About this RNA:
Chemical mapping of a 177-nucleotide RNA with 2A3 and DMS. For 2A3 the reverse transcriptase was SuperScript II with manganese. The reactions ran in a buffer of 150 mM KOAc, 10 mM MgCl2 and 150 mM bicine (pH 8.5), at 24 C. For 2A3, 8,708 sequencing reads were counted. The DMS profile rests on 9,613 reads.
RNA sequence: GGGAACGACUCGAGUAGAGUCGAAAAGAUAUGGACUCCUUACAGACAUGAAGUUCGUCGGAAACGACGAUACUUCAACAGCUGUUGGGAGUCCUAAGUCAAAGCCACAGCGUUCGCGCUGUGGCAACAAAAUAAAUACGUUCGCGUAUUUAUUUUGAAAAGAAACAACAACAACAAC
Reactivity to 2A3 in 0.01 (KOAc 150mM, MgCl2 10mM, bicine 150mM(pH8.5), 24C), signal-to-noise 2, nucleotides 027 to 126: g000a010u020a010u070g000g000a010c000u000c000c000u020u050a000c020a010g120a060c100a300u210g000a000a000g010u000u000c000g000u010c000g030g000a050a020a020c010g020a000c000g000a010u020a030c000u000u010c000a070a020c080a060g130c000u000g000u010u000g000g010g050a000g000u010c000c000u000a000a000g000u000c010a130a080a020g000c000c000a010c010a000g040c010g130u200u290c300g010c010g020c160u000g000u020g000g000c000a000a000
Reactivity to DMS in 0.01 (KOAc 150mM, MgCl2 10mM, bicine 150mM(pH8.5), 24C), signal-to-noise 5, nucleotides 027 to 126: g000a040u000a210u000g000g000a020c000u000c000c000u000u010a010c000a010g020a090c110a210u020g010a030a010g010u000u000c000g010u000c000g010g000a070a060a120c000g000a010c000g000a010u020a010c000u000u000c000a060a070c290a190g000c010u000g000u000u000g000g010g000a020g010u000c000c000u000a000a040g000u000c020a130a120a160g000c010c000a000c000a000g010c010g030u000u010c250g020c020g010c000u000g020u000g000g010c010a000a040